RNA sequence: GGGAACGACUCGAGUAGAGUCGAAAAUUGAAUCCAAAACGAAUAUGGAUGAACGAUAUUUUACCAGAAGACUAACUCUCAUCUUCAUCCGAGAAAUCGCUCUAUCUUCUGACUGGUUCAUUUAAGACAGCAUUUUACGUUUCGACGUAAAAUGCUGAAAAGAAACAACAACAACAAC
Reactivity to DMS in 0.01 (KOAc 150mM, MgCl2 10mM, bicine 150mM(pH8.5), 24C), signal-to-noise 3, nucleotides 027 to 126: u020u060g000a020a030u030c000c050a030a040a070a300c200g000a060a040u020a100u000g020g000a010u000g000a020a070c080g020a040u010a080u040u030u000u010a160c200c060a070g000a040a010g030a040c130u030a040a080c090u010c000u000c020a170u020c000u000u000c020a030u020c250c110g000a060g000a020a050a080u000c060g050c180u000c010u060a020u020c050u020u000c030u000g000a300c140u000g010g020u000u010c010a020u000u050u100a060a120g020a260
Reactivity to 2A3 in 0.01 (KOAc 150mM, MgCl2 10mM, bicine 150mM(pH8.5), 24C), signal-to-noise 4, nucleotides 027 to 126: u070u030g020a020a050u170c040c000a030a070a030a040c080g050a030a030u090a060u090g020g000a020u030g020a120a020c040g000a010u010a160u070u130u070u060a140c070c060a080g020a100a010g020a050c040u140a190a010c030u040c000u010c060a040u000c010u040u030c030a070u040c070c040g020a030g070a060a050a000u030c050g000c030u000c000u000a040u070c050u030u000c000u000g060a110c020u000g040g000u040u000c000a030u060u120u130a050a010g100a020